[RMDB]
RNA sequence: GGGAACGACUCGAGUAGAGUCGAAAAGAUAUGGAUCUGACAGAGCUGUAAGUACAUCGGAAACGAUGUAUUGAGGAACUACUCUGGAGGAUCCUAAGUCAAACUCGCUCAGUUCGCUGAGCGAGAACAGCUAAGGAUCGUUCGCGAUCCUUAGCUGAAAAGAAACAACAACAACAAC
Reactivity to 2A3 in 0.01 (KOAc 150mM, MgCl2 10mM, bicine 150mM(pH8.5), 24C), signal-to-noise 1, nucleotides 027 to 126: g000a000u040a010u090g000g000a000u000c000u000g010a020c010a000g010a020g030c120u160g090u180a000a000g030u000a000c000a010u020c010g010g080a030a010a030c000g000a000u000g000u030a010u010u040g030a060g010g120a140a060c220u190a030c000u250c000u040g010g010a000g000g030a010u000c010c000u040a020a010g000u000c030a010a030a120c030u010c010g020c000u010c000a060g050u080u070c190g000c190u000g010a010g000c000g000a010g000a010a020
Reactivity to DMS in 0.01 (KOAc 150mM, MgCl2 10mM, bicine 150mM(pH8.5), 24C), signal-to-noise 2, nucleotides 027 to 126: g000a010u010a300u000g020g050a000u020c000u000g020a300c000a010g000a000g000c020u010g000u020a080a150g000u040a010c000a010u000c000g050g010a130a100a100c000g010a000u000g010u000a000u000u000g020a250g020g000a120a100c070u020a160c000u000c020u000g000g000a300g000g000a030u000c000c000u000a020a050g010u000c010a120a170a230c000u010c000g010c000u000c000a000g010u000u000c260g000c000u000g020a010g000c010g000a000g010a000a040